[RMDB]
RNA sequence: GGGAACGACUCGAGUAGAGUCGAAAAAUAACGGAGCGCGUAUCCGCGUAUGUGGGGUCGGUUUGUGGGGAGGUCUUUCGUUAUAUCGAAGAGCGUAGCGAUACCCCGGUGAUGGUCAGAGGUCGCACAGGGGAAAGGCAUUCGUGCCUUUCCCCUGAAAAGAAACAACAACAACAAC
Reactivity to DMS in 0.01 (KOAc 150mM, MgCl2 10mM, bicine 150mM(pH8.5), 24C), signal-to-noise 2, nucleotides 027 to 126: a020u050a070a150c130g000g000a030g000c080g020c070g020u010a150u020c180c060g000c050g030u030a070u030g010u030g000g020g010g000u010c050g010g020u000u030u050g040u030g000g000g000g010a090g010g000u000c020u010u010u000c010g030u010u030a110u020a160u040c000g010a050a090g000a060g020c070g020u000a030g010c050g000a060u010a130c100c010c020c000g000g010u000g000a040u000g010g020u010c070a090g000a140g000g000u000c060g000c160a160
Reactivity to 2A3 in 0.01 (KOAc 150mM, MgCl2 10mM, bicine 150mM(pH8.5), 24C), signal-to-noise 2, nucleotides 027 to 126: a000u300a020a090c090g080g000a030g070c180g000c000g050u080a160u110c210c000g020c010g040u040a030u170g100u060g000g010g040g000u090c060g010g110u080u010u160g080u060g010g010g010g010a060g000g000u090c000u060u110u010c000g060u010u210a060u020a030u090c040g000a040a030g000a000g040c010g000u000a010g110c000g000a080u100a060c010c010c000c000g030g000u080g000a150u070g000g000u000c000a020g040a000g070g050u040c050g000c040a060